Structure probing data (2A3) for a 207-nucleotide construct. The reactions ran in a buffer of 150 mM KOAc, 10 mM MgCl2 and 150 mM bicine (pH 8.5), at 24 C. For 2A3 the reverse transcriptase was SuperScript II with manganese.
[RMDB]
RNA sequence: GGGAACGACUCGAGUAGAGUCGAAAAAAAACCAUUCGAGCUAGUCAAUGCGUGGCGUGUCUCUCCGCAGCGUGUUGGCGAAUGUAAAGAGUGACUAAGCAUGUAGUACAGAGGAUGUAGUAAUUUUGAAACUCGCGCAUCUUCGGAUGCGCGAGAACUGUUUAGGUUUCUUCGGAAACCUAAACAGAAAAGAAACAACAACAACAAC
Reactivity to 2A3 in 0.01 (KOAc 150mM, MgCl2 10mM, bicine 150mM(pH8.5), 24C), signal-to-noise 2, nucleotides 027 to 156: a000a000a000a000c050c000a020u070u080c040g040a060g000c000u060a000g060u000c010a030a000u020g030c010g010u010g130g040c030g020u040g050u020c020u010c010u000c050c010g020c010a070g000c000g010u040g010u010u010g020g000c000g000a000a000u040g010u120a030a000a150g030a020g010u000g000a000c020u080a050a000g020c000a050u040g030u090a080g020u020a080c030a060g030a040g060g030a030u050g010u010a010g040u030a120a180u090u110u100u140g080a080a020a010c010u000c000g020c000g000c000a010u000c000u060u050c190g020g000a000u000g000c000g000c010g000a000g000a000a000